Chemical mapping of a 177-nucleotide RNA with 2A3 and DMS. Values cover nucleotides 27 to 126. For DMS the reverse transcriptase was MarathonRT. For DMS, 7,165 sequencing reads were counted. The RNA was probed in 150 mM KOAc, 10 mM MgCl2 and 150 mM bicine (pH 8.5) at 24 C.
RNA sequence: GGGAACGACUCGAGUAGAGUCGAAAAGACAAUAGCGUAGGGAACCAAGCAAAGAGGUAAGAAAUCCCACGGUAGAAGGCUUGGUUCUAGCCGUGGGAAGAAGAAGUCGCACUCCCUACGCCGAUAAACUGAACGUAAGAUUCGUCUUACGUUCAGUAAAAGAAACAACAACAACAAC
Reactivity to 2A3 in 0.01 (KOAc 150mM, MgCl2 10mM, bicine 150mM(pH8.5), 24C), signal-to-noise 5, nucleotides 027 to 126: g100a020c050a050a160u060a140g010c000g000u000a000g010g000g000a010a020c020c020a060a010g030c020a030a210a080g160a080g100g100u180a150a050g060a090a130a020u020c000c010c000a000c000g000g010u050a060g020a080a010g080g010c060u080u080g050g010u060u020c010u020a020g020c000c000g000u000g020g000g000a010a010g030a010a000g000a010a000g020u060c030g000c030a010c020u010c010c010c000u010a000c000g000c000c000g010a010u130a030a190
Reactivity to DMS in 0.01 (KOAc 150mM, MgCl2 10mM, bicine 150mM(pH8.5), 24C), signal-to-noise 6, nucleotides 027 to 126: g020a150c130a100a100u020a080g010c000g010u000a020g000g010g000a040a110c040c040a070a050g010c040a080a100a100g000a070g010g000u010a070a110g010a070a070a100u000c000c000c000a010c000g000g030u000a030g010a030a030g010g010c050u000u000g010g010u000u000c070u000a050g010c000c000g020u000g000g000g000a020a040g010a100a070g010a080a080g010u000c070g000c100a230c090u000c000c000c000u000a010c020g020c000c080g010a060u000a040a060